[RMDB]
RNA sequence: GGGAACGACUCGAGUAGAGUCGAAAACCGUAGGGACUCAGUAUAGAGCUUGGCGUUUGACGUUCGCUUCGAAAGAGGCGAACCGAGCCAAGAACUACUCUAGAACUGUCCCUAAACGGAAAAGCCAACACGUCAACUUCGGUUGACGUGUUGGCAACUAAACAACGAAGUUCGCUUCGUUGUUUAGAAAAGAAACAACAACAACAAC
Reactivity to 2A3 in 0.01 (KOAc 150mM, MgCl2 10mM, bicine 150mM(pH8.5), 24C), signal-to-noise 2, nucleotides 027 to 156: c000c000g000u020a030g020g000g000a000c030u010c070a010g010u000a000u000a010g000a010g000c000u000u010g010g000c020g190u130u180u240g110a100c060g010u000u010c000g020c020u000u010c010g070a100a070a100g000a010g010g020c000g010a000a000c010c010g010a010g000c010c010a010a000g000a010a010c020u180a030c000u020c000u000a010g010a070a030c000u000g000u000c010c010c000u000a010a000a000c000g030g050a110a090a050a080g030c020c000a000a000c000a000c000g000u000c000a010a000c000u070u140c300g080g000u000u000g000a000c040g000u000g000u000u000g000g000c010a010a000
Reactivity to DMS in 0.01 (KOAc 150mM, MgCl2 10mM, bicine 150mM(pH8.5), 24C), signal-to-noise 2, nucleotides 027 to 156: c020c000g030u000a090g000g020g000a040c010u000c010a160g020u010a110u000a020g010a020g020c010u000u000g020g010c000g030u010u000u000g000a150c240g000u000u000c020g020c000u000u000c010g030a230a140a300g000a050g000g030c000g010a000a010c030c000g020a140g030c010c000a030a040g010a060a130c060u000a210c010u000c000u000a000g010a170a150c070u020g020u000c010c000c000u010a010a030a090c030g000g000a040a040a120a220g020c000c000a010a000c000a020c000g030u000c000a020a030c020u000u000c290g070g000u020u000g000a010c010g090u010g000u030u020g000g050c020a000a040

This 207-nucleotide RNA was probed chemically with 2A3 and DMS. It was measured as part of the RMDB library RNAMAK. The RNA was probed in 150 mM KOAc, 10 mM MgCl2 and 150 mM bicine (pH 8.5) at 24 C. For 2A3, 2,635 sequencing reads were counted. Reactivities are given for positions 27 through 156. DMS adducts were read by reverse transcription with MarathonRT.